RNA sequence: GGGAACGACUCGAGUAGAGUCGAAAAACGCGCCGCUCAUGCGAUGACGCCUUCAUCGCGUGAGCGGCGUGUACCUGAAGCGGACAUCUUGCCAAACGAAAUGCUGACCGAGAUACCCUGAAGUAGCUUCGACCAUUUAAUUCGUUAAAUGGUCGAAAAAAGAAACAACAACAACAAC
Reactivity to DMS in 0.01 (KOAc 150mM, MgCl2 10mM, bicine 150mM(pH8.5), 24C), signal-to-noise 4, nucleotides 027 to 126: a030c020g000c000g030c010c000g040c010u000c010a000u020g000c060g030a020u020g020a120c300g020c200c100u020u010c000a020u000c000g050c000g010u000g000a030g010c000g000g010c000g010u000g000u000a010c010c010u000g000a090a090g010c050g010g000a060c030a030u000c040u000u010g020c030c020a040a070a080c110g000a070a120a040u010g000c030u000g000a060c040c020g010a110g000a140u020a080c010c010c020u000g010a090a160g020u020a070g010c100
Reactivity to 2A3 in 0.01 (KOAc 150mM, MgCl2 10mM, bicine 150mM(pH8.5), 24C), signal-to-noise 3, nucleotides 027 to 126: a000c000g000c000g000c000c010g000c000u000c000a000u010g000c000g020a010u000g020a030c070g140c070c040u090u060c010a010u010c000g000c000g020u010g000a000g000c000g010g000c000g000u000g000u000a010c000c000u020g040a050a000g050c030g050g010a010c020a060u030c020u060u090g050c040c040a060a100a040c070g100a100a050a040u130g000c030u020g020a060c020c020g030a020g010a070u110a110c010c000c000u050g030a100a020g080u100a020g030c030